[RMDB]
RNA sequence: GGGAACGACUCGAGUAGAGUCGAAAAGCUGCCUAAACACCAGCCUGUGUGACUAAUAGCAGAUUGCUUGUGUUUGCCUAUUAGUCUUAAAAUCAGCAAGCUACAUUAGGUUGCAGUCAGGUCAGCCUAAAAGAGAUUUACUGACUCGCAAGAUUUGCUAGGUAUGCGUGUUCGCACGCAUACCUAGAAAAGAAACAACAACAACAAC
Reactivity to 2A3 in 0.01 (KOAc 150mM, MgCl2 10mM, bicine 150mM(pH8.5), 24C), signal-to-noise 1, nucleotides 027 to 156: g000c010u010g020c000c040u000a030a020a010c000a010c000c020a040g060c040c000u220g080u050g150u140g070a040c070u060a000a030u000a010g020c020a010g030a070u030u100g010c020u040u070g020u000g000u060u000u010g000c010c000u010a020u010u010a000g010u000c000u030u150a060a010a000a030u210c100a000g000c000a000a000g000c050u070a040c040a050u000u020a000g060g010u020u000g000c040a040g070u000c000a010g020g020u030c010a000g000c000c010u070a050a070a020a020g050a020g020a020u180u200u260a060c000u000g000a000c020u040c090g060c070a030a070g010a300u150u080u120g040